[RMDB]
RNA sequence: GGGAACGACUCGAGUAGAGUCGAAAAUGGUGAGCUCCAGGACCCCCAAAAGGAGGGGGGUGGGCCUUGGACCUCCAGGAGCCAUGGGAUCCGUGGAGUACCCGGGAUAUCCCUUCUCCACACUCCUUAAGAGAAUUCUUCGGAAUUCUCAAAAGAAACAACAACAACAAC
Reactivity to 2A3 in 0.01 (KOAc 150mM, MgCl2 10mM, bicine 150mM(pH8.5), 24C), signal-to-noise 9, nucleotides 027 to 129: u070g000g000u050g040a040g020c060u010c010c000a040g020g020a060c000c010c000c000c010a030a060a020a100g120g010a070g010g020g000g000g000g000u060g020g090g040c000c000u030u100g010g010a060c020c020u010c010c000a010g010g010a020g040c090c070a160u140g060g030g000a020u020c020c030g140u140g010g000a070g080u120a140c030c010c000g000g000g000a050u080a080u150c010c000c000u050u040c010u000c000c020a060c000a030c040u050c000c000u040u080a060a020
Reactivity to DMS in 0.01 (KOAc 150mM, MgCl2 10mM, bicine 150mM(pH8.5), 24C), signal-to-noise 5, nucleotides 027 to 129: u040g040g020u030g010a040g040c120u020c030c040a050g040g030a140c060c020c000c000c010a070a060a090a050g000g000a130g000g000g000g000g000g000u000g030g000g040c050c030u000u000g000g030a110c160c040u090c000c030a000g000g040a000g060c110c050a000u080g020g020g030a000u000c040c040g000u090g010g020a090g060u000a150c080c040c060g000g040g020a130u060a120u060c010c010c010u020u090c030u050c020c010a110c090a130c070u030c030c050u020u060a090a120

The record gives the reactivity of an RNA of 170 nucleotides to 2A3 and DMS. For 2A3 the reverse transcriptase was SuperScript II with manganese. Conditions: 150 mM KOAc, 10 mM MgCl2 and 150 mM bicine (pH 8.5), 24 C. The 2A3 profile rests on 24,914 reads. Reactivities are given for positions 27 through 129.